Source: RMDB library OK2TST, as collected in RNAgym. Chemical mapping of a 177-nucleotide RNA with 2A3 and DMS. The DMS profile rests on 3,307 reads. The RNA was probed in 150 mM KOAc, 10 mM MgCl2 and 150 mM bicine (pH 8.5) at 24 C.
RNA sequence: GGGAACGACUCGAGUAGAGUCGAAAAUUAGUCAUUAUGCUGAUUGGCGGAAUAGGGAUGGUUCUCGUGAAAAGUCAAUUGGCUUUUUGGGUAUUAGGAAUGUUGCUCAGUAUCGCGGUGGGACCAAGGAGUGAGUAAUGUUCGCAUUACUCACUCCAAAAGAAACAACAACAACAAC
Reactivity to 2A3 in 0.01 (KOAc 150mM, MgCl2 10mM, bicine 150mM(pH8.5), 24C), signal-to-noise 1, nucleotides 027 to 126: u050u050a030g060u010c010a000u030u220a060u150g000c050u050g000a050u000u020g030g010c020g060g000a050a060u120a230g100g000g000a010u130g140g130u240u000c050u030c030g040u080g000a080a090a040a010g000u000c000a090a170u050u030g000g000c000u010u010u040u030u010g090g070g000u090a090u050u060a140g050g090a070a040u150g000u090u090g040c000u000c040a040g040u130a050u150c030g000c040g030g030u080g080g000g040a010c000c040a040a080
Reactivity to DMS in 0.01 (KOAc 150mM, MgCl2 10mM, bicine 150mM(pH8.5), 24C), signal-to-noise 3, nucleotides 027 to 126: u010u020a060g000u010c080a070u000u000a030u020g020c010u010g000a050u000u000g010g030c010g040g010a100a100u000a110g030g010g000a080u000g040g010u010u000c020u000c020g040u000g010a020a060a070a130g010u000c020a050a060u010u020g000g010c020u000u000u000u000u000g010g000g000u000a050u010u010a110g020g000a060a050u010g010u000u000g000c050u000c050a030g020u000a070u000c120g020c100g000g000u000g000g010g000a110c050c110a060a120